Background
Structure probing data (2A3) for a 207-nucleotide construct. Values are in units of 0.01, from 0 to 300, in steps of 10. 2A3 adducts were read by reverse transcription with SuperScript II with manganese. The 2A3 profile rests on 382 reads. It was measured as part of the RMDB library OK3TST.
RNA sequence: GGGAACGACUCGAGUAGAGUCGAAAAUCAUAACAGUAGGAUGGAAUAUGGGUAAGAAUAAUAAUGCUAUGAAAACAAGUGGGUUUUCCACCCCUCUACAUUGAUUGCUUUGAGCAUUCCAUAGACUGUAUUUCUGAGGUGGAAGGGAAAGCUAGGACCGUAGGAUUAGCUUCGGCUAAUCCUACGGAAAAGAAACAACAACAACAAC
Reactivity to 2A3 in 0.01 (KOAc 150mM, MgCl2 10mM, bicine 150mM(pH8.5), 24C), signal-to-noise 1, nucleotides 027 to 156: u070c030a030u050a160a120c070a000g070u080a060g000g090a050u040g010g040a040a040u080a090u220g000g000g000u080a060a010g090a110a000u140a130a120u140a130a000u110g000c030u070a080u220g100a110a000a000a070c060a000a150g020u160g020g000g000u060u010u190u000c030c000a000c030c000c000c000u010c000u000a050c080a020u040u110g000a070u000u000g030c050u110u020u300g020a110g000c010a090u010u000c010c000a020u000a080g050a050c060u000g070u110a100u030u080u050c120u020g070a100g040g000u120g000g060a080a080g110g000g000a070a110a000g030c040u020a020g100g080a120